[RMDB]
RNA sequence: GGGAACGACUCGAGUAGAGUCGAAAAGAUAUGGAUUCUCGACCCCGAAGACAGCCGUUCGGAAACGAACGGUCGAGGUGUCGAGGAAUCCUAAGUCAAAAGCUGAAACCGUUCGCGGUUUCAGCAAGAAUCCUCGUAGGUUCGCCUACGAGGAUUCAAAAGAAACAACAACAACAAC
Reactivity to DMS in 0.01 (KOAc 150mM, MgCl2 10mM, bicine 150mM(pH8.5), 24C), signal-to-noise 2, nucleotides 027 to 126: g000a030u010a030u000g000g000a020u000u000c000u000c000g010a010c000c300c010c000g000a010a120g030a040c300a070g010c010c010g040u000u000c000g000g000a090a040a030c000g020a010a020c000g010g000u000c010g000a030g030g040u000g000u000c030g030a020g010g000a020a040u000c000c000u000a020a150g000u000c000a080a070a050a110g010c000u020g000a000a020a000c020c000g030u010u070c300g030c010g010g000u000u000u010c000a040g040c000a000a040